[RMDB]
RNA sequence: GGGAACGACUCGAGUAGAGUCGAAAAGUGGAUAGUUUCGACUAUCCACACAACUGAUCAUCUUACAGUGGAGGAUGAAGAAGAUGGCCAUCGGAUCCUCAAAUAGCACAGAGUUCGCUCUGUGCAAGGAUAAGGAACGAUUCGUCGUUCCUUAUCCAAAAGAAACAACAACAACAAC
Reactivity to DMS in 0.01 (KOAc 150mM, MgCl2 10mM, bicine 150mM(pH8.5), 24C), signal-to-noise 5, nucleotides 027 to 126: g010u000g010g000a020u000a010g010u000u000u010c160g020a050c000u000a010u000c000c000a000c010a030c160a050a120c090u000g000a090u000c030a020u000c010u000u000a080c080a110g010u010g010g010a050g010g010a050u000g000a100a120g010a090a070g010a040u000g000g000c030c040a060u000c050g010g000a100u000c020c000u000c090a060a070a080u010a100g010c000a010c000a000g000a010g020u000u010c230g000c000u000c010u000g020u000g000c000a030a030
Reactivity to 2A3 in 0.01 (KOAc 150mM, MgCl2 10mM, bicine 150mM(pH8.5), 24C), signal-to-noise 8, nucleotides 027 to 126: g010u000g000g000a010u000a010g010u030u050u110c200g030a010c010u000a000u010c000c000a000c000a000c000a000a010c020u060g020a040u040c010a010u000c020u070u140a130c050a160g080u140g140g070a050g050g010a060u090g070a060a120g030a030a000g020a030u040g030g020c030c010a030u040c030g050g030a030u010c010c010u040c030a040a090a110u170a030g000c010a000c000a000g010a000g010u070u060c160g060c070u000c000u000g000u000g000c000a000a010
Structure probing data (DMS and 2A3) for a 177-nucleotide construct.
Reactivities are given for positions 27 through 126.
It was measured as part of the RMDB library M2PK50.
In probing experiments dimethyl sulfate is read out at A N1 and C N3, which are open when not base-paired.